[RMDB]
About this RNA: This 177-nucleotide RNA was probed chemically with 2A3 and DMS. For DMS the reverse transcriptase was MarathonRT. In probing experiments dimethyl sulfate is read out at A N1 and C N3, which are open when not base-paired. Reactivities are rounded to 0.1 and cut off at 0 and 3. The data come from the RNA Mapping Database (RMDB), library VIROID.
RNA sequence: GGGAACGACUCGAGUAGAGUCGAAAACUCGUGGUUCCUGUGGUUCACACCUGACCUCCUGAGCAGAAAAGAAAAAAGAAGGCGGCUCGGAGGAGCGCUUCAGGGAUCCCCGGGGAAACCUGGAGCGGUAUAUCCAUUCGUUCGCGAAUGGAUAUACAAAAGAAACAACAACAACAAC
Reactivity to 2A3 in 0.01 (KOAc 150mM, MgCl2 10mM, bicine 150mM(pH8.5), 24C), signal-to-noise 1, nucleotides 027 to 126: c010u000c010g000u030g060g000u050u040c010c000u070g110u110g070g040u190u220c080a040c000a010c080c040u060g110a130c030c000u000c000c030u100g010a010g000c040a000g270a130a120a080a010g300a030a270a080a050a000a000g050a080a020g200g080c090g040g000c010u000c000g000g000a010g000g000a010g000c010g000c010u020u010c000a010g000g020g030a040u030c000c000c000c060g300g040g000g000a000a030a000c000c000u000g000g000a000g000c060g010
Reactivity to DMS in 0.01 (KOAc 150mM, MgCl2 10mM, bicine 150mM(pH8.5), 24C), signal-to-noise 1, nucleotides 027 to 126: c010u000c000g090u000g010g010u000u000c000c020u000g020u020g010g020u010u000c110a120c110a060c020c080u000g010a250c040c000u000c000c050u000g020a030g030c010a120g020a160a110a100a260g000a030a100a060a060a150a170g010a170a120g000g000c120g000g000c010u000c030g000g050a040g030g000a090g020c010g000c000u000u000c010a010g010g010g010a300u000c000c020c030c210g010g000g030g000a020a100a170c030c010u000g010g000a000g000c000g000